Source information: This 177-nucleotide RNA was probed chemically with 2A3. The 2A3 profile rests on 331 reads.
[RMDB]
RNA sequence: GGGAACGACUCGAGUAGAGUCGAAAACUUUUUCCAGAUCUAUUCGGAUAAACCGAAUAACUCGUCGUAGUCAAGCAUUGCUUGAGGUGGCACAGGGAAGAGCUGUGGUGGCUCAGUUCGUAAAGCUGGGCUCAAUGGUAUUCGUACCAUUGAGCCCAAAAGAAACAACAACAACAAC
Reactivity to 2A3 in 0.01 (KOAc 150mM, MgCl2 10mM, bicine 150mM(pH8.5), 24C), signal-to-noise 1, nucleotides 027 to 126: c080u000u050u000u000u000c000c000a000g000a080u020c060u050a000u000u000c010g000g000a010u160a290a000a190c000c000g000a030a030u000a110a070c000u000c080g070u060c000g050u090a030g140u000c010a010a010g000c080a300u060u190g000c000u000u020g000a000g080g140u020g020g080c100a060c080a100g020g010g000a010a050g000a000g140c040u010g110u120g000g150u020g020g030c000u000c050a030g070u030u010c000g010u090a050a050a050g000c000u010
Overview
Reactivities are given for positions 27 through 126. Conditions: 150 mM KOAc, 10 mM MgCl2 and 150 mM bicine (pH 8.5), 24 C. The data come from the RNA Mapping Database (RMDB), library RFM100.